[RMDB]
RNA sequence: GGGAACGACUCGAGUAGAGUCGAAAACUACAUAGUUUCGACUAUGUAGAAACCUUUAGGAAGCAUGCAGAUGCAUAUGGACGAGGGCAACUAACCUAUUGCGAACAGCAGGUUUCGACCUGCUGAAGCAAAUUGCCCAGUUCGCUGGGCAAUUUGCAAAAGAAACAACAACAACAAC
Reactivity to DMS in 0.01 (KOAc 150mM, MgCl2 10mM, bicine 150mM(pH8.5), 24C), signal-to-noise 2, nucleotides 027 to 126: c000u000a020c000a000u000a010g000u010u000u010c170g010a050c000u000a010u000g010u000a000g000a100a160a150c020c010u000u020u000a130g000g030a180a110g000c050a070u020g020c080a020g000a050u010g000c020a090u000a020u020g000g000a260c080g000a080g000g000g010c080a020a110c150u000a060a140c020c040u010a140u010u000g010c020g020a090a170c050a040g000c000a010g010g010u000u000u000c130g010a020c000c000u010g030c000u000g000a030a250
Reactivity to 2A3 in 0.01 (KOAc 150mM, MgCl2 10mM, bicine 150mM(pH8.5), 24C), signal-to-noise 1, nucleotides 027 to 126: c000u000a010c000a020u020a020g020u050u050u000c110g050a000c010u000a000u000g000u000a010g010a020a000a000c010c000u050u020u100a220g050g020a120a000g020c040a030u110g000c020a020g040a300u140g000c000a000u020a070u160g000g000a020c030g020a160g000g020g000c000a020a050c030u070a010a080c010c010u000a080u080u170g030c040g070a110a030c000a010g000c000a000g000g020u000u010u130c210g040a020c010c000u000g000c000u000g000a000a000
Source: RMDB library M2PK50, as collected in RNAgym.
Structure probing data (DMS and 2A3) for a 177-nucleotide construct.
High DMS reactivity at an A or C suggests that its Watson-Crick edge is free.
For DMS, 850 sequencing reads were counted.
Values are in units of 0.01, from 0 to 300, in steps of 10.
Reactivities are given for positions 27 through 126.
The 2A3 profile rests on 1,042 reads.